[RMDB]
RNA sequence: GGGAACGACUCGAGUAGAGUCGAAAAAAUCUAGCUGGUGGGAAUAUGGAUUACUUAUUGACUAAGUUAGGUAUAGGGAACAAUCAACUCAGCUCAUUAAUCGGUAGCGGCUUAAUCACCGGUAACCCUACAAGAGUCUAUUCGUAGACUCUUGUAGAAAAGAAACAACAACAACAAC
Reactivity to 2A3 in 0.01 (KOAc 150mM, MgCl2 10mM, bicine 150mM(pH8.5), 24C), signal-to-noise 2, nucleotides 027 to 126: a000a000u070c020u000a020g000c030u030g060g050u090g060g040g050a090a070u150a070u170g030g050a060u000u090a070c020u060u040a050u030u170g070a050c050u050a110a030g090u050u110a080g020g050u080a040u090a160g020g020g020a070a060c040a020a040u070c020a020a020c030u020c030a020g020c020u010c030a070u070u180a110a080u070c030g030g010u010a000g070c020g020g010c020u010u020a010a010u090c010a010c030c010g000g030u040a030a060c040c000
Reactivity to DMS in 0.01 (KOAc 150mM, MgCl2 10mM, bicine 150mM(pH8.5), 24C), signal-to-noise 5, nucleotides 027 to 126: a070a060u000c050u000a100g010c050u000g010g010u000g000g000g000a090a060u000a040u010g000g010a150u010u000a060c080u000u010a050u000u000g010a110c120u010a050a030g000u000u000a040g020g010u000a080u010a130g000g010g010a080a080c120a050a050u000c060a030a060c050u000c040a060g010c080u000c060a070u000u000a050a050u010c060g000g010u000a060g020c060g010g000c050u000u000a040a070u000c100a080c020c000g000g010u000a080a100c090c050